Background: Source: RMDB library OK1LIB, as collected in RNAgym. Structure probing data (2A3) for a 177-nucleotide construct. The reactions ran in a buffer of 150 mM KOAc, 10 mM MgCl2 and 150 mM bicine (pH 8.5), at 24 C.
[RMDB]
RNA sequence: GGGAACGACUCGAGUAGAGUCGAAAACGAUCAAAGCCAGGAGACAUCCACAUAUGCACUUAGCCUUAAAACUUGCUGGAAUGUCUGUGGAUAACAUGCAACUACCAAUUAACGGAUUUGCUUGUAGUAGCGUGACGCGUUUCGACGCGUCACGCUAAAAAGAAACAACAACAACAAC
Reactivity to 2A3 in 0.01 (KOAc 150mM, MgCl2 10mM, bicine 150mM(pH8.5), 24C), signal-to-noise 1, nucleotides 027 to 126: c100g070a000u070c060a060a140a190g100c070c000a090g000g230a000g200a010c030a000u000c030c000a010c000a160u170a030u150g000c030a030c000u000u300a000g000c000c000u210u200a100a160a000a000c100u070u070g070c040u050g030g090a210a080u070g000u000c000u000g200u000g020g040a010u000a130a100c000a000u130g000c000a000a000c000u120a100c020c000a130a180u120u120a250a000c160g030g040a040u010u010u010g000c090u000u000g010u000a030g100